An RNA of 177 nucleotides, treated with 2A3 and DMS and read out base by base. Conditions: 150 mM KOAc, 10 mM MgCl2 and 150 mM bicine (pH 8.5), 24 C. High 2A3 reactivity points to a flexible backbone, as in loops and unpaired stretches. For 2A3 the reverse transcriptase was SuperScript II with manganese.
[RMDB]
RNA sequence: GGGAACGACUCGAGUAGAGUCGAAAAGUUUCCCAGUAAUUCUGCCUGGCGUUGCCGUGGCUCCUCGUUCGGAUCGGCUUUCCGCUGCCUUCCGCUGGAUGACGACGGGUUAUCCGGCGGUCGACGCCACAGGCGUUGAAUUCGUUCAACGCCUGUGAAAAGAAACAACAACAACAAC
Reactivity to 2A3 in 0.01 (KOAc 150mM, MgCl2 10mM, bicine 150mM(pH8.5), 24C), signal-to-noise 6, nucleotides 027 to 126: g060u020u050u040c000c000c000a000g040u070a020a150u100u040c030u050g040c010c010u040g030g000c030g090u070u100g030c030c020g050u040g040g010c010u020c000c020u040c010g110u110u050c040g030g040a080u030c020g030g010c060u040u040u000c030c030g010c050u040g010c010c000u020u030c000c000g000c000u010g010g010a020u010g010a000c040g050a070c090g300g070g020u000u000a010u010c010c000g000g010c000g010g000u000c030g010a030c030g040c010
Reactivity to DMS in 0.01 (KOAc 150mM, MgCl2 10mM, bicine 150mM(pH8.5), 24C), signal-to-noise 3, nucleotides 027 to 126: g000u020u010u020c000c000c000a160g010u030a050a100u020u010c070u010g010c060c040u010g000g000c030g000u010u010g010c060c060g000u020g000g000c040u010c050c010u010c070g000u010u010c060g000g000a070u010c060g030g000c050u000u010u010c010c020g000c050u010g030c050c020u000u000c000c010g020c020u000g000g010a030u000g000a010c000g030a200c250g010g040g010u000u000a010u000c010c000g010g010c010g010g000u000c040g000a050c080g010c100